[RMDB]
RNA sequence: GGGAACGACUCGAGUAGAGUCGAAAAGACGAACGAAAACACAAAUGUUCCACGGUGCAGAAGGGUCCCUCACAUGUGGAUCACCCAUGUAACUCGGACAGGAUAUGCUUUUGGGAAAAAGAGAGAACAUUCUCGGUCUGUUCGCAGACCGAGAAUGAAAAGAAACAACAACAACAAC
Reactivity to DMS in 0.01 (KOAc 150mM, MgCl2 10mM, bicine 150mM(pH8.5), 24C), signal-to-noise 2, nucleotides 027 to 126: g010a070c130g000a100a180c070g010a070a050a120a110c060a040c080a110a080a080u000g000u020u000c050c030a050c130g030g020u000g000c100a010g010a140a120g030g000g010u020c020c030c040u000c130a130c100a030u000g010u010g000g030a090u000c030a050c030c010c050a080u000g040u000a040a140c040u000c130g010g020a070c060a020g000g050a060u030a080u000g010c000u000u000u000u010g000g010g000a020a040a020a000a050g030a110g000a140g030a070a160
Reactivity to 2A3 in 0.01 (KOAc 150mM, MgCl2 10mM, bicine 150mM(pH8.5), 24C), signal-to-noise 1, nucleotides 027 to 126: g060a000c060g000a070a010c020g030a060a000a060a020c070a020c030a010a130a090u110g000u100u000c000c040a040c020g070g010u050g020c030a020g020a160a090g110g010g000u020c030c000c020u000c030a170c020a080u230g060u160g010g010a060u070c070a130c000c010c000a000u070g000u060a090a070c010u000c040g030g050a010c030a020g050g050a060u090a030u180g050c050u050u090u020u050g110g020g000a050a020a020a080a000g110a000g000a010g010a060a000